[RMDB]
RNA sequence: GGGAACGACUCGAGUAGAGUCGAAAAGAUAUGGAAACAUCUUGAGAAGAUCACUCGGAAACGAGUGGCUUCAAUGAUGGAGUGUUUCCUAAGUCAAAAGCAGCUGAUUGUUCGCAAUCAGCUGCAACGAGAUUAGGGUGUUCGCACCCUAAUCUCGAAAAGAAACAACAACAACAAC
Reactivity to DMS in 0.01 (KOAc 150mM, MgCl2 10mM, bicine 150mM(pH8.5), 24C), signal-to-noise 1, nucleotides 027 to 126: g010a000u010a230u010g000g000a000a000a040c000a030u000c000u030u010g020a100g010a010a000g000a090u000c010a000c000u000c010g000g000a050a030a040c000g020a010g020u000g020g020c010u000u000c010a140a200u010g000a120u000g010g000a040g000u000g020u000u000u000c010c010u010a010a150g000u010c020a090a080a080a100g000c010a000g000c000u000g000a020u010u000g000u000u010c260g000c030a020a000u000c020a010g000c010u000g020c010a000a030
Reactivity to 2A3 in 0.01 (KOAc 150mM, MgCl2 10mM, bicine 150mM(pH8.5), 24C), signal-to-noise 1, nucleotides 027 to 126: g010a010u010a000u080g000g020a000a020a010c000a030u030c010u070u160g060a170g010a040a050g090a300u070c000a000c000u000c000g000g050a020a030a010c000g000a000g050u010g020g020c000u040u010c000a030a300u090g040a030u070g010g000a080g080u160g000u010u010u000c020c000u010a050a000g020u010c000a010a020a040a220g020c000a000g050c000u000g020a000u010u000g070u050u190c280g050c080a000a000u000c000a020g010c000u000g000c000a020a000

About this RNA: Structure probing data (DMS and 2A3) for a 177-nucleotide construct. For 2A3, 1,653 sequencing reads were counted. For 2A3 the reverse transcriptase was SuperScript II with manganese. For DMS, 1,177 sequencing reads were counted.